[RMDB]
RNA sequence: GGGAACGACUCGAGUAGAGUCGAAAACUAGGAAAUGGCAAACUUUAAAAAGGUGUUCUUCAGUUGCCCCAAGAAAUACAAAUGUCACGCUUGUCUGACUGUCAGGGAUGAAUGGUCCUAGUGCAUGCAUGAUGACUGUAUAUUCUUCUUUGAUAGCCUCAUGUACGCUAUUCGUAGCGUACAUGAGAAAAGAAACAACAACAACAAC
Reactivity to DMS in 0.01 (KOAc 150mM, MgCl2 10mM, bicine 150mM(pH8.5), 24C), signal-to-noise 2, nucleotides 027 to 156: c070u030a090g000g010a100a070a110u000g020g030c070a030a070a050c030u000u010u000a050a130a140a080a030g000g010u010g000u000u000c040u000u000c060a070g010u000u000g030c040c030c080c100a070a090g010a070a040a090u000a090c030a010a080a140u000g020u000c020a050c040g060c020u010u000g010u010c020u000g010a030c000u000g010u000c010a060g000g070g040a210u040g000a060a060u000g020g020u010c000c040u010a070g000u010g120c010a060u000g000c030a050u000g010a060u010g020a170c040u000g010u000a050u000a140u000u010c010u000u000c010u010u000u010g000a130u000a150g030c180
Reactivity to 2A3 in 0.01 (KOAc 150mM, MgCl2 10mM, bicine 150mM(pH8.5), 24C), signal-to-noise 5, nucleotides 027 to 156: c010u030a050g010g070a050a050a110u150g070g000c080a090a080a090c100u110u150u250a110a140a040a060a040g060g000u060g010u080u060c020u080u070c080a030g010u030u030g070c010c000c000c000a030a020g050a050a060a020u180a060c030a030a100a060u140g010u040c020a020c090g030c050u040u050g020u070c040u040g030a080c010u020g020u050c040a050g050g010g070a030u030g050a080a080u050g050g020u030c010c020u030a020g020u020g090c020a050u070g000c010a030u070g040a040u030g000a040c030u010g040u040a070u010a070u130u000c000u040u020c020u060u110u060g130a160u130a040g040c010